[RMDB]
RNA sequence: GGGAACGACUCGAGUAGAGUCGAAAAAAAAGCCCAGUGUUUACAGCACCUCUCACAUCCAGGGAAACCCCACCCUGGCGCUCACUCUUAGUAACACUUCCUAGUAGGUAUUAGGUGGUAAGCCGAGCUCAUACUUGGAAUUCGUUCCAAGUAUGAGAAAAGAAACAACAACAACAAC
Reactivity to 2A3 in 0.01 (KOAc 150mM, MgCl2 10mM, bicine 150mM(pH8.5), 24C), signal-to-noise 6, nucleotides 027 to 126: a000a000a000a010g040c000c000c000a020g020u050g030u060u060u040a040c050a010g020c010a020c010c000u030c000u010c010a040c010a080u030c010c000a010g010g000g020a060a110a080c010c010c010c000a010c010c000c000u000g000g000c010g010c010u030c010a050c010u020c010u040u070a020g020u060a090a010c020a020c050u060u080c010c000u020a070g040u040a040g080g060u090a100u120u060a080g040g010u040g030g030u030a030a020g020c010c020g000a010g010
Reactivity to DMS in 0.01 (KOAc 150mM, MgCl2 10mM, bicine 150mM(pH8.5), 24C), signal-to-noise 4, nucleotides 027 to 126: a060a020a090a060g020c020c000c010a090g020u010g020u000u000u010a040c100a120g000c050a030c040c020u000c030u010c040a080c100a080u010c020c010a040g010g000g010a020a080a150c030c020c030c030a180c030c020c000u000g000g020c250g000c020u000c030a040c030u010c030u010u010a060g010u000a030a050c080a040c050u000u000c050c030u000a060g010u000a090g010g010u020a030u000u010a060g010g010u000g010g010u010a080a110g010c030c040g000a080g020
An RNA of 177 nucleotides, treated with 2A3 and DMS and read out base by base. 2A3 adducts were read by reverse transcription with SuperScript II with manganese. Reactivities are given for positions 27 through 126. For DMS the reverse transcriptase was MarathonRT. The data come from the RNA Mapping Database (RMDB), libraries RFM100 and RFMREP.